[RMDB]
RNA sequence: GGGAACGACUCGAGUAGAGUCGAAAAAUGCCGCAUUCAGUGACGGUGACUCUAGUGGGCGACUGUCCAUCUAGCGUUGACAUCUACAUACUAUAUAGUAAUACCAAUACUCAAGACUACGAAACGGCCGCACCCUAUGAUUCGUCAUAGGGUGCGGAAAAGAAACAACAACAACAAC
Reactivity to 2A3 in 0.01 (KOAc 150mM, MgCl2 10mM, bicine 150mM(pH8.5), 24C), signal-to-noise 2, nucleotides 027 to 126: a000u060g020c000c000g060c070a020u130u160c060a090g030u020g020a110c000g000g000u000g040a030c000u000c000u000a000g050u030g010g000g020c000g230a250c170u250g070u000c000c000a040u010c000u030a000g000c000g060u000u000g000a000c000a050u040c010u040a000c000a010u130a180c060u000a020u020a070u090a290g100u010a100a140u050a060c010c010a000a000u050a220c000u000c040a000a060g000a060c060u040a030c170g000a170a100a000c020g000g000